The record gives the reactivity of an RNA of 177 nucleotides to 2A3 and DMS. The 2A3 profile rests on 1,965 reads.
RNA sequence: GGGAACGACUCGAGUAGAGUCGAAAACGCCGCGGCCGGGGUGCGGCUGGUGGUGGCGUCGGUGCAGGACGAUAUCGAUGCCGGUCGGGUCGUCGAGACCAUCCCGUCGCGAAAUCCGAUACAGACCUAGUGCUACGAUAUUCGUAUCGUAGCACUAAAAAGAAACAACAACAACAAC
Reactivity to 2A3 in 0.01 (KOAc 150mM, MgCl2 10mM, bicine 150mM(pH8.5), 24C), signal-to-noise 1, nucleotides 027 to 126: c030g050c050c000g050c040g010g020c120c120g010g010g010g050u130g030c040g000g000c010u030g060g050u070g000g030u010g010g000c010g020u020c030g050g050u080g000c030a030g060g200a030c040g040a080u020a020u100c050g080a040u060g010c010c020g000g030u060c040g000g000g020u030c020g050u030c110g060a010g020a030c000c010a000u020c000c000c000g010u000c000g010c000g000a050a050a060u040c020c010g000a040u050a140c040a020g090a060c000c020
Reactivity to DMS in 0.01 (KOAc 150mM, MgCl2 10mM, bicine 150mM(pH8.5), 24C), signal-to-noise 2, nucleotides 027 to 126: c250g030c200c010g030c010g010g030c050c050g070g010g020g050u010g000c020g010g020c000u000g000g030u000g010g020u010g000g010c010g010u000c000g010g010u000g000c120a180g000g010a070c090g010a090u010a070u000c010g020a110u000g010c030c030g000g020u010c060g010g000g030u010c070g000u000c140g000a180g000a070c090c020a050u010c030c010c010g000u010c020g030c030g000a090a100a100u000c040c020g000a090u020a100c130a090g000a150c140c030

Overview:
For DMS the reverse transcriptase was MarathonRT.